Structure probing data (DMS and 2A3) for a 177-nucleotide construct.
Conditions: 150 mM KOAc, 10 mM MgCl2 and 150 mM bicine (pH 8.5), 24 C.
It was measured as part of the RMDB library TTRDES.
2A3 adducts were read by reverse transcription with SuperScript II with manganese.

RNA sequence: GGGAACGACUCGAGUAGAGUCGAAAAGAUAUGGACCAUCGAGAUGGACGAGGAUCUCAACUCGGAAACGAGUUGAGGGAGUCCUACCUCGAGUGGUCCUAAGUCAAAACCGGUCUUCGGACCGGAACAGACUGAUCCUGUUCGCAGGAUCAGUCUGAAAAGAAACAACAACAACAAC
Reactivity to DMS in 0.01 (KOAc 150mM, MgCl2 10mM, bicine 150mM(pH8.5), 24C), signal-to-noise 1, nucleotides 027 to 126: g010a060u010a300u030g000g000a000c000c010a090u000c000g030a020g000a020u000g000g020a000c010g040a090g010g010a020u020c010u000c000a020a000c000u000c010g010g000a080a110a150c000g060a040g040u000u000g010a040g000g030g010a020g010u000c000c010u000a040c150c000u000c020g000a030g050u000g010g000u000c000c020u000a010a040g010u010c040a090a060a180a160c000c000g000g010u000c000u000u030c210g000g000a030c000c000g020g000a060a100
Reactivity to 2A3 in 0.01 (KOAc 150mM, MgCl2 10mM, bicine 150mM(pH8.5), 24C), signal-to-noise 1, nucleotides 027 to 126: g010a020u100a020u180g000g000a010c010c000a000u010c010g000a000g010a020u020g000g000a020c020g090a300g000g050a020u000c000u000c000a010a000c000u010c000g070g070a040a070a060c030g010a000g010u000u000g000a000g000g000g000a010g020u040c000c010u010a030c000c000u010c030g040a000g060u040g000g010u000c000c000u000a010a000g010u030c020a000a010a090a200c000c010g020g010u030c000u060u210c300g180g020a020c010c000g000g010a010a010